The record gives the reactivity of an RNA of 207 nucleotides to DMS and 2A3. It was measured as part of the RMDB library OK3TST. The reactions ran in a buffer of 150 mM KOAc, 10 mM MgCl2 and 150 mM bicine (pH 8.5), at 24 C. Reactivities are given for positions 27 through 156.
RNA sequence: GGGAACGACUCGAGUAGAGUCGAAAAGACAUGUAAACUGUGUGUAUGUGAAUGCUUUAUUCAUAAUAAACAGCACAUGUUUAUGCCACCUUCUCUGAGGCUCUGACUUUAUUUAGAAAUCGAAGGGGUUCUGCCGGCUCUCGGCGUGCCCCGCGGGCACAUGACGGUGGUUCGCCACCGUCAUGUGAAAAGAAACAACAACAACAAC
Reactivity to DMS in 0.01 (KOAc 150mM, MgCl2 10mM, bicine 150mM(pH8.5), 24C), signal-to-noise 1, nucleotides 027 to 156: g010a010c010a020u010g010u000a100a070a080c010u010g020u000g010u010g030u000a050u000g030u000g000a030a010u000g010c270u000u000u000a050u010u000c010a030u000a070a110u000a070a050a040c010a040g020c040a050c050a010u000g020u010u000u000a050u020g020c070c010a050c050c020u000u000c030u000c080u000g010a140g010g000c000u010c040u000g000a100c050u010u010u000a070u000u010u000a190g000a060a090a110u000c050g000a110a110g020g010g060g000u000u000c010u020g050c030c020g020g010c110u000c110u000c000g020g020c000g000u000g010c030c010c010c020g010c020g020g000g020
Reactivity to 2A3 in 0.01 (KOAc 150mM, MgCl2 10mM, bicine 150mM(pH8.5), 24C), signal-to-noise 4, nucleotides 027 to 156: g010a000c020a010u040g010u060a050a060a110c010u020g000u000g050u030g050u070a060u120g020u010g000a030a020u070g080c180u140u300u300a020u040u030c020a010u050a160a010u040a040a170a020c020a010g040c110a020c000a010u030g030u030u090u040a130u110g000c010c010a040c020c000u070u020c060u020c030u070g040a030g030g050c040u010c060u090g100a120c020u130u080u090a150u110u190u100a130g090a110a090a070u160c070g040a150a110g000g000g000g000u000u000c060u200g010c000c000g030g090c090u070c110u150c230g000g000c000g000u010g060c010c000c020c000g000c010g000g030g010